[RMDB]
RNA sequence: GGGAACGACUCGAGUAGAGUCGAAAAACACCUGACAGCCCCUCCCUCCUCUGAGAGGCGGAGAGUGCUGACUGUAGUGACCAUUGCAUGCCGGGUGCAGCAUCUGGAAGAGCUAGGCAGGGUGUCAACCACUGCCACCAUUCGUGGUGGCAGUGGUAAAAGAAACAACAACAACAAC
Reactivity to DMS in 0.01 (KOAc 150mM, MgCl2 10mM, bicine 150mM(pH8.5), 24C), signal-to-noise 4, nucleotides 027 to 126: a090c050a030c000c000u000g030a150c020a010g010c010c020c010c010u000c000c000c030u010c010c000u000c030u020g020a150g010a030g020g060c300g000g000a020g000a030g010u010g020c010u000g010a140c040u010g000u010a090g020u000g010a250c020c030a030u010u000g010c020a040u000g030c030c040g020g010g020u000g030c020a060g010c020a050u000c060u000g020g000a050a130g010a200g010c040u000a050g020g020c120a120g000g000g020u000g000u010c100a120
Reactivity to 2A3 in 0.01 (KOAc 150mM, MgCl2 10mM, bicine 150mM(pH8.5), 24C), signal-to-noise 2, nucleotides 027 to 126: a000c000a000c000c000u060g100a040c000a000g030c130c040c010c000u000c000c040c020u040c040c030u110c060u130g200a240g000a010g270g000c070g040g020a050g000a000g020u090g020c030u020g020a110c020u100g070u140a000g010u010g090a020c000c080a060u020u170g000c080a110u060g000c030c010g300g050g090u170g000c010a000g020c010a050u000c060u080g040g020a040a000g050a080g150c060u050a020g010g100c000a030g080g050g000u030g030u030c010a060